RNA sequence: GGGAACGACUCGAGUAGAGUCGAAAACAAGAAUGGCACCCUGAGUGUGAGCUUUACCUAUGGGGAUAACGACAUAACCGAAGAACCCUUUAACCUCAUUGACCUCAAUACCAACGCCAUUCAAUACCAGUCGUCCUAUGUUCGCAUAGGACGACUGAAAAGAAACAACAACAACAAC
Reactivity to 2A3 in 0.01 (KOAc 150mM, MgCl2 10mM, bicine 150mM(pH8.5), 24C), signal-to-noise 2, nucleotides 027 to 126: c010a000a210g020a010a010u020g000g010c000a030c060c040c000u060g030a040g030u050g000u000g020a020g060c040u070u040u150a140c030c060u050a090u080g000g000g000g070a050u150a120a020c020g090a050c060a150u150a110a020c050c060g100a180a040g070a080a050c000c000c000u050u100u010a020a050c020c000u000c030a010u020u040g060a020c020c010u000c000a040a040u050a100c070c000a030a010c080g010c010c020a000u020u010c000a010a000u080a080c050
Reactivity to DMS in 0.01 (KOAc 150mM, MgCl2 10mM, bicine 150mM(pH8.5), 24C), signal-to-noise 1, nucleotides 027 to 126: c250a090a290g000a000a000u000g000g010c000a270c080c110c170u000g010a000g110u000g000u010g000a000g020c190u050u000u010a090c300c080u000a130u010g000g020g020g020a090u010a090a080c100g000a150c190a130u000a080a160c130c130g000a100a010g000a150a150c060c060c000u000u000u000a060a140c140c000u020c020a010u020u000g050a100c300c000u000c000a110a050u000a030c080c030a010a130c300g000c000c060a030u000u000c010a060a170u000a110c020